The record gives the reactivity of an RNA of 207 nucleotides to 2A3 and DMS. The RNA was probed in 150 mM KOAc, 10 mM MgCl2 and 150 mM bicine (pH 8.5) at 24 C. For DMS the reverse transcriptase was MarathonRT. For 2A3, 1,075 sequencing reads were counted. Source: RMDB library OK3TST, as collected in RNAgym.
RNA sequence: GGGAACGACUCGAGUAGAGUCGAAAAAAAGGACCACAAGGUAAUCCUGCUGUUAUACUCAAACCUGAUUAGACUCUAAUGAGUAAAUUGGUUCCAUUACUCAAGAGGAACAUGGACAAUUUGAAGAGGGUUUGCAGGAUAAUCACAAAAAUUAAUACUUAACUCAUUGUUUCGACAAUGAGUUAAGAAAAGAAACAACAACAACAAC
Reactivity to 2A3 in 0.01 (KOAc 150mM, MgCl2 10mM, bicine 150mM(pH8.5), 24C), signal-to-noise 2, nucleotides 027 to 156: a000a000a000g160g000a110c100c040a100c100a050a050g060g010u060a060a000u040c000c000u000g000c070u080g040u210u110a090u060a070c040u020c090a030a050a050c030c010u040g050a100u040u070a090g070a090c000u000c010u060a260a240u120g000a000g010u020a010a030a030u020u060g070g000u160u030c010c000a010u000u010a030c000u000c050a030a030g020a030g110g010a040a050c050a040u120g020g040a010c040a060a070u110u130u150g040a100a050g010a020g010g000g000u030u090u020g000c010a000g000g010a010u040a020a030u070c030a000c080a070a040a110a040a010u200u150a100a030u100a150
Reactivity to DMS in 0.01 (KOAc 150mM, MgCl2 10mM, bicine 150mM(pH8.5), 24C), signal-to-noise 2, nucleotides 027 to 156: a070a250a070g020g030a210c020c040a100c100a140a130g000g010u000a110a110u000c020c000u000g000c020u000g040u000u000a090u000a020c040u000c040a040a070a050c020c030u000g000a300u000u010a150g010a170c010u000c010u010a120a170u010g010a070g040u000a030a040a090u000u000g030g040u000u000c030c020a140u000u000a110c130u120c070a110a080g020a140g000g000a010a120c170a040u000g010g000a160c070a020a100u000u000u000g000a070a100g000a300g010g000g000u000u000u000g010c030a040g020g020a040u010a010a070u000c060a120c070a050a010a090a160a120u010u000a090a200u000a170